[RMDB]
RNA sequence: GGGAACGACUCGAGUAGAGUCGAAAAUACGCCAAUUUCGAUUGGCGUAACACGCAAACCGGCCGAAAGGCAUUUUAUCCGUACGGUGGCGAAAGCCUAAAAACGCACUGUCAUUCGUGACAGUGAAUAAUCAAAUAGUAUUCGUACUAUUUGAUUAAAAAGAAACAACAACAACAAC
Reactivity to 2A3 in 0.01 (KOAc 150mM, MgCl2 10mM, bicine 150mM(pH8.5), 24C), signal-to-noise 9, nucleotides 027 to 126: u030a000c000g000c000c000a010a010u040u060u100c180g140a020u000u010g000g000c000g000u000a000a020c020a000c030g030c030a110a190a090c010c010g070g010c010c010g070a080a030a020g020g000c010a000u030u070u040u070a090u040c020c000g040u090a070c030g030g020u020g020g010c010g050a120a030a030g040c010c020u110a110a070a020a020a010c080g010c030a010c000u000g000u000c010a030u030u060c190g090u020g000a000c000a000g000u000g000a010a030
Reactivity to DMS in 0.01 (KOAc 150mM, MgCl2 10mM, bicine 150mM(pH8.5), 24C), signal-to-noise 9, nucleotides 027 to 126: u000a010c010g010c000c000a010a010u000u000u010c180g010a030u000u000g000g010c000g010u000a010a050c140a110c090g010c070a030a100a090c030c020g010g010c010c020g000a080a090a130g010g020c050a070u000u010u010u000a090u010c100c090g010u000a160c050g010g010u000g000g010c010g010a070a070a130g010c010c010u010a020a030a050a060a090c250g000c000a010c000u000g010u000c000a040u000u010c180g020u000g000a010c000a010g010u000g000a050a060